[RMDB]
RNA sequence: GGGAACGACUCGAGUAGAGUCGAAAAACGGAGUCCGUCUACGGACGGACUCCGAUGCCAUCGUCGUCGAUCUCUAUCAACUACCCUUGCGACUAUGGCAACGUCCUCAGUUACGACUGAGGACGAACGGUUACGCGCAGUUCGCUGCGCGUAACCGAAAAGAAACAACAACAACAAC
Reactivity to 2A3 in 0.01 (KOAc 150mM, MgCl2 10mM, bicine 150mM(pH8.5), 24C), signal-to-noise 2, nucleotides 027 to 126: a000c000g000g000a000g030u030c030c000g000u000c020u010a100c300g070g000a010c000g040g000a000c000u000c010c000g020a000u020g000c000c000a010u010c040g020u000c000g000u030c050g040a200u020c120u000c000u140a230u210c100a130a090c040u130a110c080c000c000u050u190g060c020g000a000c000u020a020u040g000g000c060a020a040c030g000u010c000c000u000c000a000g000u000u040a140c230g010a010c080u000g010a000g000g000a000c000g000a030a030